[RMDB]
RNA sequence: GGGAACGACUCGAGUAGAGUCGAAAAGAUAUGGACCAUGUUAUGGUCGUGACCCUGCGCAGAUAUCGGAAACGAUGUAGCAGCACGAACGUCAUGGUCCUAAGUCAAAGGCGGGUUCGCCCGCCAAGAUUUAGUCUGCGUUCGCGCAGACUAAAUCAAAAGAAACAACAACAACAAC
Reactivity to DMS in 0.01 (KOAc 150mM, MgCl2 10mM, bicine 150mM(pH8.5), 24C), signal-to-noise 2, nucleotides 027 to 126: g010a060u010a300u000g020g010a010c000c000a020u000g000u010u000a030u000g000g020u000c000g040u010g000a160c160c210c060u010g010c010g060c180a200g000a080u000a010u000c000g000g010a120a050a250c000g000a010u000g010u010a180g000c000a010g000c000a000c010g010a010a000c000g010u000c000a000u000g010g000u000c010c010u000a010a040g010u000c040a070a090a140g010g010c000g020g000g010u000u030c250g000c000c000c000g000c000c010a030a030
Reactivity to 2A3 in 0.01 (KOAc 150mM, MgCl2 10mM, bicine 150mM(pH8.5), 24C), signal-to-noise 2, nucleotides 027 to 126: g040a040u090a040u160g020g010a000c000c000a000u000g050u180u230a120u150g040g050u000c000g000u000g000a200c050c040c070u070g000c040g000c080a090g090a300u130a020u120c010g040g000a080a050a080c000g000a000u030g070u200a080g040c000a000g020c020a000c020g000a050a010c000g030u040c000a010u020g000g000u030c000c000u040a070a010g020u020c030a130a050a070g010g000c010g000g010g070u050u080c280g120c090c020c030g000c000c000a000a010

Background: Conditions: 150 mM KOAc, 10 mM MgCl2 and 150 mM bicine (pH 8.5), 24 C. An RNA of 177 nucleotides, treated with DMS and 2A3 and read out base by base. DMS adducts were read by reverse transcription with MarathonRT. 2A3 adducts were read by reverse transcription with SuperScript II with manganese. The data come from the RNA Mapping Database (RMDB), library TTRDEL.